[RMDB]
RNA sequence: GGGAACGACUCGAGUAGAGUCGAAAAGACCCCUUCAGCGAACAGAGAUCUCUGACCCGCGAGGAGUAAGACCAUAGCGAUAGGAGGAGAUGCUAGGAGUUAGAGGAGACCGAAGCGAGGAGGAAAGCAUGGAUUGUAGGUUCGCCUACAAUCCAUGAAAAGAAACAACAACAACAAC
Reactivity to 2A3 in 0.01 (KOAc 150mM, MgCl2 10mM, bicine 150mM(pH8.5), 24C), signal-to-noise 1, nucleotides 027 to 126: g070a000c020c030c000c000u000u170c030a000g000c000g000a040a000c020a050g060a040g030a260u020c060u000c000u090g120a170c000c000c000g030c050g020a060g020g000a050g030u040a080a060g070a080c030c040a050u120a070g040c040g040a080u070a110g020g030a010g040g010a040g000a000u040g020c030u020a070g030g050a040g030u040u100a020g030a040g070g000a020g020a010c010c020g030a020a020g000c020g030a030g000g000a030g020g040a070a030a010g030
Reactivity to DMS in 0.01 (KOAc 150mM, MgCl2 10mM, bicine 150mM(pH8.5), 24C), signal-to-noise 2, nucleotides 027 to 126: g010a260c050c000c000c130u010u000c020a080g040c030g020a120a150c070a050g010a060g000a080u020c070u010c000u010g000a090c090c060c030g020c050g000a100g000g010a090g000u030a080a050g000a150c040c030a040u010a120g020c020g000a050u030a090g000g000a300g010g000a070g000a070u010g040c030u000a080g020g000a060g010u000u000a070g000a060g000g000a090g000a040c090c000g010a090a080g010c060g020a100g000g000a080g010g010a070a150a090g000